[RMDB]
RNA sequence: GGGAACGACUCGAGUAGAGUCGAAAAUUUUGGCUUUUACCGGGUUAUCCGGCAUCUCCGGACCCGCGGCGAAUUUACGGUUAGCGCAGCCGCCGUAACCCGCAGCCCAACCGCCUUUGAUGCCGACGCUACCUAUUUUAUUCGUAAAAUAGGUAGCAAAAGAAACAACAACAACAAC
Reactivity to 2A3 in 0.01 (KOAc 150mM, MgCl2 10mM, bicine 150mM(pH8.5), 24C), signal-to-noise 9, nucleotides 027 to 126: u130u100u030u090g030g000c030u050u080u080u070a040c020c000g000g000g030u060u070a070u080c030c000g000g000c010a050u030c050u010c020c010g030g050a090c010c010c020g010c010g000g000c080g060a100a130u030u030u060a040c010g010g040u050u130a050g040c100g010c150a040g040c060c020g000c000c000g000u010a020a020c010c000c000g010c030a020g020c000c020c000a040a060c030c030g040c020c000u110u060u120g030a040u050g010c010c000g010a020c080
Reactivity to DMS in 0.01 (KOAc 150mM, MgCl2 10mM, bicine 150mM(pH8.5), 24C), signal-to-noise 5, nucleotides 027 to 126: u020u010u010u010g000g010c010u010u010u020u020a050c060c000g000g010g010u000u020a090u010c040c000g010g010c200a040u020c090u010c090c020g020g000a130c080c070c040g000c050g000g030c060g000a120a060u030u020u000a030c040g000g010u000u020a150g010c040g000c060a070g020c030c060g010c000c010g010u010a030a040c140c030c010g000c050a090g020c010c020c030a080a130c060c030g000c070c050u010u030u000g000a080u000g000c010c030g000a170c190
Conditions: 150 mM KOAc, 10 mM MgCl2 and 150 mM bicine (pH 8.5), 24 C.
Structure probing data (2A3 and DMS) for a 177-nucleotide construct.
DMS adducts were read by reverse transcription with MarathonRT.